The record gives the reactivity of an RNA of 207 nucleotides to 2A3 and DMS. For DMS, 2,617 sequencing reads were counted. The 2A3 profile rests on 6,492 reads. Source: RMDB library RNAMAK, as collected in RNAgym. Reactivities are given for positions 27 through 156. Conditions: 150 mM KOAc, 10 mM MgCl2 and 150 mM bicine (pH 8.5), 24 C. For 2A3 the reverse transcriptase was SuperScript II with manganese. DMS adducts were read by reverse transcription with MarathonRT.
RNA sequence: GGGAACGACUCGAGUAGAGUCGAAAACCCCACCUUCGGGUGGGGAAAAAAGAUAUGGAUCAUAUCCCAGUGGAGCUGGAGGUAUCGGAAACGAUACCACACAGCGUUGAAACUGGGAGUAUGAUCCUAAGUCAAAAAAGACCAGUUCGCUGGUCAAGUUGCUAAAUAGAUUCGUCUAUUUAGCAACAAAAGAAACAACAACAACAAC
Reactivity to 2A3 in 0.01 (KOAc 150mM, MgCl2 10mM, bicine 150mM(pH8.5), 24C), signal-to-noise 3, nucleotides 027 to 156: c000c010c000c000a000c000c000u090u120c300g020g000g000u080g000g000g000g050a040a070a040a020a040a040g050a040u090a040u070g000g000a000u000c000a000u010a010u020c010c000c000a000g010u000g000g020a020g000c000u000g000g000a040g030g000u000a000u000c000g010g010a070a030a020c010g000a010u000a000c000c000a000c030a000c000a000g010c020g020u080u020g000a000a000a000c000u000g010g000g020a010g000u010a000u010g000a000u000c000c000u000a010a020g000u000c030a040a020a080a070a060a020g020a000c020c020a000g010u050u110c230g050c140u010g010g000u010c010a010a020
Reactivity to DMS in 0.01 (KOAc 150mM, MgCl2 10mM, bicine 150mM(pH8.5), 24C), signal-to-noise 1, nucleotides 027 to 156: c000c010c000c000a030c000c000u000u010c300g000g030g070u040g120g000g030g030a000a000a070a060a040a060g010a080u000a210u000g030g010a010u000c020a000u000a050u000c000c000c010a010g030u000g020g010a230g010c000u010g040g000a300g010g000u000a000u000c000g020g000a140a090a230c000g000a040u000a020c020c000a040c140a300c010a050g010c010g020u040u000g000a210a180a060c000u000g000g000g010a000g010u000a000u000g000a020u010c000c000u020a000a000g020u000c020a010a030a130a070a130a140g000a030c000c020a090g000u000u000c300g000c000u000g020g000u010c010a050a080